[RMDB]
An RNA of 177 nucleotides, treated with DMS and read out base by base. The data come from the RNA Mapping Database (RMDB), library OK2TRN.

RNA sequence: GGGAACGACUCGAGUAGAGUCGAAAAGCAUUCGACGACGCAGCGUGCCUGCGCGGCGGUAUCGGGCCCGGUGAUGAAGAAGUAGUUGGGGAAACCGUGAACGGCGACGCCGAGGUAGGGCUCCAUGCCUUCGUCAACAGUUCGCUGUUGACGAAGGAAAAGAAACAACAACAACAAC
Reactivity to DMS in 0.01 (KOAc 150mM, MgCl2 10mM, bicine 150mM(pH8.5), 24C), signal-to-noise 2, nucleotides 027 to 126: g020c150a090u000u010c020g010a040c010g010a140c080g020c040a040g000c150g070u020g030c140c030u000g000c020g010c010g000g000c020g010g000u010a050u000c120g020g010g020c020c030c010g010g010u010g020a050u010g020a060a100g000a120a160g000u000a060g000u010u010g010g010g010g010a090a100a100c050c030g000u000g010a070a090c030g000g000c030g010a250c140g010c090c020g000a040g000g000u010a170g010g000g010c020u000c030c060a050u000g010
The DMS profile rests on 1,728 reads.